An RNA of 177 nucleotides, treated with DMS and 2A3 and read out base by base. Conditions: 150 mM KOAc, 10 mM MgCl2 and 150 mM bicine (pH 8.5), 24 C. Values cover nucleotides 27 to 126. For DMS, 2,099 sequencing reads were counted. Source: RMDB library TTRDEL, as collected in RNAgym.
[RMDB]
RNA sequence: GGGAACGACUCGAGUAGAGUCGAAAAGAUAUGGAUCACGACAUGACAUGGUUCGGAAACGAACCCGCUGUCAACAGCGUGAAUCCUAAGUCAAAGCCCACAGUAACGUUCGCGUUACUGUGGGCAAGUCCUAUCCACAGUUCGCUGUGGAUAGGACAAAAGAAACAACAACAACAAC
Reactivity to DMS in 0.01 (KOAc 150mM, MgCl2 10mM, bicine 150mM(pH8.5), 24C), signal-to-noise 3, nucleotides 027 to 126: g000a040u000a300u000g000g000a030u010c020a000c000g030a090c050a270u010g000a030c000a010u010g010g000u000u000c020g000g000a060a090a190c010g000a000a000c000c000c030g010c010u010g000u000c000a030a050c240a110g050c010g000u000g000a020a060u000c000c000u000a050a170g010u000c020a080a140a140g000c000c000c000a000c000a010g000u000a000a000c000g030u000u010c270g010c010g020u000u000a000c000u010g010u000g010g010g010c000a000a010
Reactivity to 2A3 in 0.01 (KOAc 150mM, MgCl2 10mM, bicine 150mM(pH8.5), 24C), signal-to-noise 3, nucleotides 027 to 126: g040a010u070a020u150g010g010a000u010c000a010c050g300a140c070a110u100g010a000c010a020u160g000g000u010u020c000g040g020a070a080a060c010g000a000a000c010c000c010g000c000u020g000u000c010a010a020c050a040g040c000g010u010g050a020a150u000c000c000u030a160a010g080u050c060a020a150a000g000c030c000c000a020c000a010g000u000a000a020c010g030u060u120c300g010c000g160u010u000a000c000u010g020u030g000g010g000c000a000a000